An RNA of 177 nucleotides, treated with DMS and 2A3 and read out base by base. For 2A3 the reverse transcriptase was SuperScript II with manganese. Values cover nucleotides 27 to 126. The data come from the RNA Mapping Database (RMDB), library M2PK50.

RNA sequence: GGGAACGACUCGAGUAGAGUCGAAAAACAUUAAGUUUCGACUUAAUGUAAACCCGAUGAAGCGGCACAUACGGAGCUUCAUACAUCUAAGAGUGCAAAUAUAAAGUUGAUCCUUCGGGAUCAACAAUACAUCAGGUCUGUUCGCAGACCUGAUGUAAAAAGAAACAACAACAACAAC
Reactivity to DMS in 0.01 (KOAc 150mM, MgCl2 10mM, bicine 150mM(pH8.5), 24C), signal-to-noise 1, nucleotides 027 to 126: a040c000a010u020u000a000a000g000u010u020u010c220g000a010c000u000u000a010a010u000g010u000a050a060a130c010c000c000g010a060u000g010a010a010g010c000g010g020c000a070c020a090u020a080c140g020g000a200g000c000u010u010c020a010u000a070c120a070u030c160u030a090a090g020a040g010u000g010c020a100a180a080u010a090u000a070a110a130g030u000u000g020a010u000c000c000u000u000c210g010g010g000a020u000c000a010a000c020a090a030
Reactivity to 2A3 in 0.01 (KOAc 150mM, MgCl2 10mM, bicine 150mM(pH8.5), 24C), signal-to-noise 1, nucleotides 027 to 126: a000c000a000u000u000a010a000g000u030u040u150c160g110a020c020u000u010a000a000u010g000u000a080a030a030c030c000c000g010a030u030g000a000a000g030c010g050g000c090a020c030a090u290a070c110g200g060a020g010c060u000u000c020a010u030a020c060a080u110c050u150a140a040g090a060g080u040g020c020a010a070a020u210a040u030a130a170a010g010u000u000g010a000u010c020c010u040u070c200g000g050g000a000u020c000a010a000c000a000a000